Conditions: 150 mM KOAc, 10 mM MgCl2 and 150 mM bicine (pH 8.5), 24 C. This 177-nucleotide RNA was probed chemically with DMS and 2A3. For DMS, 1,375 sequencing reads were counted. Reactivities are given for positions 27 through 126. It was measured as part of the RMDB library OK2TST. For 2A3 the reverse transcriptase was SuperScript II with manganese.
RNA sequence: GGGAACGACUCGAGUAGAGUCGAAAAGGGAACCCUCUCAGCAUUAUCUGGAGAAGAAUUCCUGGCAGGAAGAUCACUACCACAGUCGUAACAAAAUCUGCACUUUGGACAUCUUGCAAACAUCCAACAAGGCUAACUAGUUCGCUAGUUAGCCUUGAAAAGAAACAACAACAACAAC
Reactivity to DMS in 0.01 (KOAc 150mM, MgCl2 10mM, bicine 150mM(pH8.5), 24C), signal-to-noise 2, nucleotides 027 to 126: g000g000g020a060a110c120c020c010u000c040u000c050a020g040c200a070u010u020a040u020c040u030g010g030a050g010a080a030g000a070a170u000u000c020c000u000g000g020c040a070g000g010a070a090g010a080u020c070a090c060u000a090c010c040a060c170a040g000u000c070g020u010a050a130c090a050a040a050a060u010c040u000g000c070a040c050u000u020u020g020g000a070c060a050u010c040u000u000g010c090a070a070a050c140a080u030c050c030a020a200
Reactivity to 2A3 in 0.01 (KOAc 150mM, MgCl2 10mM, bicine 150mM(pH8.5), 24C), signal-to-noise 1, nucleotides 027 to 126: g060g000g010a000a030c030c040c030u010c020u000c010a050g000c030a140u110u110a130u280c050u100g060g030a040g000a100a060g040a010a050u010u000c000c000u000g030g060c040a030g010g110a030a010g040a060u060c000a030c150u090a090c040c000a010c030a040g050u040c030g060u070a070a060c040a060a030a050a110u060c030u090g000c030a000c030u030u020u020g000g020a000c000a030u040c020u010u020g000c000a050a000a100c000a070u080c020c010a010a030